[RMDB]
RNA sequence: GGGAACGACUCGAGUAGAGUCGAAAAAUCCAUCGCACACAUGUUCGCAUGUGUUUGCGUAUGGUGCAAUUGAAAUUUCAUUAGGUUGCCUAAUUUGGGUAACAAGUGCAGUGCGUCCUAGUGGCUCGUAGGCAUGCAAUUUCGAUUGCAUGCCUACAAAAGAAACAACAACAACAAC
Reactivity to 2A3 in 0.01 (KOAc 150mM, MgCl2 10mM, bicine 150mM(pH8.5), 24C), signal-to-noise 5, nucleotides 027 to 126: a010u010c000c000a010u000c010g000c000a000c000a000c000a000u010g010u050u120c190g030c100a010u010g000u000g020u040u090u150g000c000g020u130a010u000g000g000u000g000c020a060a150u070u120g040a070a040a040u130u220u050c020a030u030u060a050g000g050u020u040g000c000c000u080a140a150u100u130u180g040g000g060u110a070a070c030a020a030g010u030g050c060a000g030u030g150c010g020u010c000c000u010a000g030u010g060g000c020u030c120
Reactivity to DMS in 0.01 (KOAc 150mM, MgCl2 10mM, bicine 150mM(pH8.5), 24C), signal-to-noise 3, nucleotides 027 to 126: a110u020c000c010a000u000c020g030c000a020c000a000c000a010u000g000u010u040c200g050c010a000u000g000u000g010u050u010u000g010c000g010u020a010u000g000g000u000g010c130a080a050u010u000g020a050a160a070u010u000u000c050a040u000u020a100g000g010u000u010g020c030c030u010a070a080u000u000u010g000g000g030u000a030a040c020a060a020g000u000g020c130a050g000u010g040c020g000u000c000c010u000a060g030u000g000g010c280u000c090

Chemical mapping of a 177-nucleotide RNA with 2A3 and DMS. Values cover nucleotides 27 to 126. The RNA was probed in 150 mM KOAc, 10 mM MgCl2 and 150 mM bicine (pH 8.5) at 24 C. The data come from the RNA Mapping Database (RMDB), libraries RFM100 and RFMREP.